Chemical mapping of a 177-nucleotide RNA with 2A3 and DMS.
It was measured as part of the RMDB libraries RFM100 and RFMREP.
The RNA was probed in 150 mM KOAc, 10 mM MgCl2 and 150 mM bicine (pH 8.5) at 24 C.
For DMS the reverse transcriptase was MarathonRT.
RNA sequence: GGGAACGACUCGAGUAGAGUCGAAAAACACGUAUACGUACGUGAAGAAAGGGAGAAGCAUUCUUUCAUUGGUUGGUGUGUAUUGCCUCGUCAGCCAAUCAGAGGAUGCCAUUUAUCCUUUUCUGAAUCUUUCAAGGGGUUUCGACCCCUUGAAAGAAAAAGAAACAACAACAACAAC
Reactivity to 2A3 in 0.01 (KOAc 150mM, MgCl2 10mM, bicine 150mM(pH8.5), 24C), signal-to-noise 2, nucleotides 027 to 126: a000c000a000c000g020u000a030u020a030c250g070u000a000c010g000u030g050a020a020g000a010a040a000g010g000g000a020g010a010a030g020c000a000u010u010c000u000u020u000c000a010u010u010g000g030u000u000g010g000u000g000u010g010u090a280u130u300g090c020c020u040c000g020u010c000a000g010c000c000a000a000u020c010a000g000a000g010g000a000u000g000c000c000a000u050u050u010a190u020c000c000u000u000u030u000c010u000g010a020a040
Reactivity to DMS in 0.01 (KOAc 150mM, MgCl2 10mM, bicine 150mM(pH8.5), 24C), signal-to-noise 3, nucleotides 027 to 126: a140c000a000c010g030u010a030u000a060c230g030u010a010c000g010u000g010a160a020g010a010a010a000g010g000g000a050g010a220a250g030c010a010u000u000c010u000u000u000c290a020u000u000g020g020u010u000g000g000u020g000u000g010u020a140u030u020g040c150c050u000c010g030u010c010a000g000c010c000a000a000u000c180a020g000a000g000g010a000u000g000c000c140a070u020u030u030a210u000c000c000u000u000u000u000c010u020g000a070a090